[RMDB]
RNA sequence: GGGAACGACUCGAGUAGAGUCGAAAAAGAAGAGGCCCUCUGUCCCCAGAGAAGGCCCUAGCAAAGGCCACGGCAUAGACAUAACCAGGAGCCACAGAUGCACUGCUUCUGCAGCAGAGAUUGUCUACAUUAGACUGGAGUUCGCUCCAGUCUAAUGAAAAGAAACAACAACAACAAC
Reactivity to 2A3 in 0.01 (KOAc 150mM, MgCl2 10mM, bicine 150mM(pH8.5), 24C), signal-to-noise 1, nucleotides 027 to 126: a010g140a030a000g060a090g030g060c000c020c000u000c000u000g090u070c030c000c010c000a010g020a000g000a130a060g040g000c000c000c000u010a020g060c080a000a150a060g040g000c030c000a050c030g020g000c020a030u050a040g040a020c030a010u050a030a060c030c010a070g040g040a020g040c030c000a010c050a010g130a040u090g010c030a020c150u070g010c010u120u040c050u190g030c050a030g000c000a000g000a010g010a120u130u090g000u050c030u030a050
Reactivity to DMS in 0.01 (KOAc 150mM, MgCl2 10mM, bicine 150mM(pH8.5), 24C), signal-to-noise 3, nucleotides 027 to 126: a120g000a160a110g000a140g000g000c020c030c030u010c010u010g010u010c020c020c070c130a130g000a050g020a080a060g000g020c000c010c050u010a070g000c100a040a090a110g010g010c020c040a090c140g000g010c070a050u000a050g010a040c060a050u000a070a110c100c030a120g010g010a130g010c040c070a070c070a050g000a070u000g000c050a130c100u010g000c010u000u000c090u010g020c070a060g010c020a050g010a120g000a110u000u000g010u010c010u010a140